[RMDB]
RNA sequence: GGGAACGACUCGAGUAGAGUCGAAAACCGAUCUGUAACUUCGGGAUAAGGAUUGGCUCUAAAGGUUGGUAGAGUGGACAUUGUAGAGCCUAGAUCAGGGGGUGAGUUUGUAGAGCGGGCAACUGUUCCAACUGUCUCAUUUCGAUGAGACAGUUGGAAAAGAAACAACAACAACAAC
Reactivity to 2A3 in 0.01 (KOAc 150mM, MgCl2 10mM, bicine 150mM(pH8.5), 24C), signal-to-noise 2, nucleotides 027 to 126: c000c000g000a070u040c020u020g060u080a060a120c000u050u060c060g030g040g010a060u080a120a000g090g000a030u060u050g030g000c000u050c000u110a060a110a060g140g010u080u050g060g090u120a080g030a050g130u060g040g000a000c010a050u030u070g120u130a010g020a000g000c000c000u030a030g020a050u080c050a010g040g120g000g000g000u050g030a060g020u000u080u070g080u050a030g020a010g020c060g000g000g000c000a030a040c040u020g010u020u000